[RMDB]
RNA sequence: GGGAACGACUCGAGUAGAGUCGAAAAUGUCGAAUAAAUGCAUGAAGGCCCUGCCAGUGUCCCGUGGCUGGGUCAGGCUCCUCACCCUUCAUUCCUUCCUCCCUUCAGCCUCUGGUGGGUCAUCAUCUGAGUCUGUUCAGCAUGCUCAGCUGUAACACGACGUAGCGAGGUUCGCCUCGCUACGUCGAAAAGAAACAACAACAACAAC
Reactivity to 2A3 in 0.01 (KOAc 150mM, MgCl2 10mM, bicine 150mM(pH8.5), 24C), signal-to-noise 1, nucleotides 027 to 156: u280g030u070c070g030a000a020u260a140a070a100u130g110c080a100u080g050a250a000g050g000c000c000c040u040g000c000c010a050g040u050g040u080c030c010c000g010u010g020g000c020u040g010g000g000u000c010a010g000g030c000u030c040c000u080c040a050c000c000c000u070u170c000a130u060u010c020c010u020u080c000c000u000c000c020c000u020u000c020a030g020c000c020u070c000u040g040g000u020g020g030g030u080c000a080u060c000a000u000c030u000g000a000g010u000c000u010g010u010u130c010a050g050c000a020u070g000c000u000c010a000g000c020u050g010u150a070a010c020a010